[RMDB]
RNA sequence: GGGAACGACUCGAGUAGAGUCGAAAAGGCCAUCCGCUCCCGGGGCAGGUGGGAGACGAGCAGCUGGAGCGAGUGUUCGCGCACCUGCGGAGAGGGCUACCAGUUCCGCGUCGUGCGCUGCUGGAAGAACUCCUAAAUGAUUCGUCAUUUAGGAGUUAAAAGAAACAACAACAACAAC
Reactivity to DMS in 0.01 (KOAc 150mM, MgCl2 10mM, bicine 150mM(pH8.5), 24C), signal-to-noise 9, nucleotides 027 to 126: g010g010c020c030a080u010c050c040g010c050u000c010c020c050g010g000g010g020c060a050g010g020u010g000g010g010a090g010a100c080g000a090g010c050a060g010c040u000g010g000a110g010c030g000a080g010u000g010u010u000c160g010c020g010c010a020c020c100u010g010c000g000g000a040g000a200g000g000g010c150u010a100c020c010a080g010u010u000c030c000g010c010g000u000c190g000u000g000c010g010c010u000g010c030u000g000g010a120a120g000
Reactivity to 2A3 in 0.01 (KOAc 150mM, MgCl2 10mM, bicine 150mM(pH8.5), 24C), signal-to-noise 6, nucleotides 027 to 126: g040g040c010c000a040u030c020c050g010c020u010c000c030c020g010g010g010g010c070a040g030g040u080g020g040g020a080g030a070c050g010a020g010c020a010g020c020u090g010g070a040g020c030g030a050g050u130g060u140u140c050g000c000g000c000a020c010c030u070g000c010g000g000a020g010a010g010g040g000c060u130a190c020c010a040g040u090u020c010c000g020c010g050u100c060g010u040g000c010g000c020u020g010c010u040g020g030a090a060g040
Structure probing data (DMS and 2A3) for a 177-nucleotide construct. Reactivities are given for positions 27 through 126.